[RMDB]
RNA sequence: GGGAACGACUCGAGUAGAGUCGAAAAUUGUUCUUGGGCCUUCAUCGUUAGUCAAGACAAUUCGAAAUAGAUGGACAGGCAUCGGGCUGACCUCCGUAUUGGAUGGGCAUUUCUGGUUUUAUUUAGAUGAGACUUACACUUUCGAGUGUAAGUCUCAAAAAGAAACAACAACAACAAC
Reactivity to DMS in 0.01 (KOAc 150mM, MgCl2 10mM, bicine 150mM(pH8.5), 24C), signal-to-noise 3, nucleotides 027 to 126: u000u000g010u000u020c020u000u000g020g020g010c070c040u010u000c100a080u010c100g000u020u010a100g010u010c040a040a040g010a070c060a040a060u010u000c140g000a040a080a090u010a090g020a080u000g010g010a060c110a070g000g010c050a050u000c060g010g010g010c100u000g000a050c040c040u000c020c030g010u000a130u000u010g010g010a060u010g000g020g010c060a050u010u000u000c050u000g000g000u010u010u010u010a060u030u020u000a120g000a290
Source information
Chemical mapping of a 177-nucleotide RNA with DMS. The data come from the RNA Mapping Database (RMDB), library OK2TST. For DMS the reverse transcriptase was MarathonRT.